The record gives the reactivity of an RNA of 177 nucleotides to DMS and 2A3. For 2A3 the reverse transcriptase was SuperScript II with manganese. The RNA was probed in 150 mM KOAc, 10 mM MgCl2 and 150 mM bicine (pH 8.5) at 24 C.
RNA sequence: GGGAACGACUCGAGUAGAGUCGAAAAGCCGAGCGCAAGGCCGAGCGCCGCGCCGCUGCCGCCAAGGCCAGGCCGGAAGCCGGCCAGGCCCCGCGCGAAGAAGAGGAAGAAGAGAAGCCGUCGCGCUUAACGCUAAUUGAUUCGUCAAUUAGCGUUAAAAAGAAACAACAACAACAAC
Reactivity to DMS in 0.01 (KOAc 150mM, MgCl2 10mM, bicine 150mM(pH8.5), 24C), signal-to-noise 5, nucleotides 027 to 126: g000c010c020g010a110g020c030g020c060a120a160g000g010c020c010g000a170g000c060g000c040c030g020c130g000c030c040g000c070u010g000c040c030g020c090c120a140a170g000g020c010c050a060g010g000c000c010g010g000a160a190g020c080c020g000g050c000c000a010g010g020c020c010c050c080g010c070g010c000g000a060a090g000a130a050g000a070g020g010a050a080g000a150a140g000a110g000a110a120g020c020c020g010u020c060g010c040g020c020u010
Reactivity to 2A3 in 0.01 (KOAc 150mM, MgCl2 10mM, bicine 150mM(pH8.5), 24C), signal-to-noise 3, nucleotides 027 to 126: g050c020c020g020a030g000c050g000c060a100a080g030g000c000c000g090a100g080c050g000c010c010g020c030g010c000c000g040c050u080g030c010c000g040c070c050a080a020g010g000c000c040a010g040g000c000c000g070g020a110a040g100c050c000g000g000c000c000a000g010g000c000c000c000c020g010c010g000c020g000a040a020g040a050a010g030a050g060g010a020a060g030a070a000g040a040g010a090a020g040c040c010g040u070c050g000c010g000c010u000